Background: The data come from the RNA Mapping Database (RMDB), library OK1LIB. The record gives the reactivity of an RNA of 177 nucleotides to 2A3 and DMS. In probing experiments dimethyl sulfate is read out at A N1 and C N3, which are open when not base-paired. As a SHAPE reagent, 2A3 marks flexible, mostly unpaired nucleotides at the ribose 2'-OH. The reactions ran in a buffer of 150 mM KOAc, 10 mM MgCl2 and 150 mM bicine (pH 8.5), at 24 C.

RNA sequence: GGGAACGACUCGAGUAGAGUCGAAAACUCGACAAGGCCGCGCCGUAUCGCUAGAGAUGUUCGUUCUUGAUUUGAGGAUCUGUCACGUGCUCUGUGGUGGAUUUUGGAGUGCAUGUGAAUGAGGGCGCGCUAGCCGCCCAUUCGUGGGCGGCUAGCGAAAAGAAACAACAACAACAAC
Reactivity to 2A3 in 0.01 (KOAc 150mM, MgCl2 10mM, bicine 150mM(pH8.5), 24C), signal-to-noise 2, nucleotides 027 to 126: c000u000c010g000a030c080a090a030g060g070c020c010g000c040g040c000c000g020u030a070u080c020g010c090u110a010g000a010g020a230u080g090u060u050c000g040u000u040c020u100u080g150a300u000u040u220g100a080g060g000a050u000c000u090g080u000c010a000c020g000u090g030c000u030c040u150g060u050g040g030u090g060g030a110u060u110u070u030g050g000a040g010u120g040c010a080u090g060u000g030a060a040u120g000a100g000g060g020c000g010
Reactivity to DMS in 0.01 (KOAc 150mM, MgCl2 10mM, bicine 150mM(pH8.5), 24C), signal-to-noise 1, nucleotides 027 to 126: c060u050c020g000a120c170a090a040g020g000c120c030g000c000g000c000c010g000u040a050u020c070g000c050u000a060g000a120g000a070u000g000u010u060c040g000u020u000c020u000u020g000a100u000u010u070g000a110g010g000a020u000c050u000g020u000c080a050c020g000u000g000c060u020c060u000g000u000g030g000u000g020g000a090u020u020u010u000g000g000a050g000u010g010c000a060u000g040u000g000a080a070u010g010a030g000g000g000c040g000